Record summary
An RNA of 177 nucleotides, treated with 2A3 and read out base by base. Reactivities are given for positions 27 through 126. 2A3 adducts were read by reverse transcription with SuperScript II with manganese. The 2A3 profile rests on 469 reads.
[RMDB]
RNA sequence: GGGAACGACUCGAGUAGAGUCGAAAACACUACCGUGCCGCCUUCCGAAAAUCCUGCUACCACAUCGCCAGACACCACAACCGACAACGACGAGAUUGAUGACAGCGCUGCGGCACGGGGCGAUAACAUGCGCUCUCGUCUUCGGACGAGAGCGCAUAAAAGAAACAACAACAACAAC
Reactivity to 2A3 in 0.01 (KOAc 150mM, MgCl2 10mM, bicine 150mM(pH8.5), 24C), signal-to-noise 1, nucleotides 027 to 126: c050a040c080u180a080c020c000g030u000g000c000c000g030c000c030u170u060c040c040g090a150a000a000a140u110c000c040u000g030c000u000a150c000c000a000c040a030u040c000g000c000c000a000g000a040c040a030c030c020a030c000a040a100c010c030g000a100c030a070a050c060g240a070c000g000a040g000a210u300u070g000a070u000g080a070c130a170g010c030g000c120u070g000c000g000g000c010a000c010g070g000g000g000c000g040a000u000a070a030c040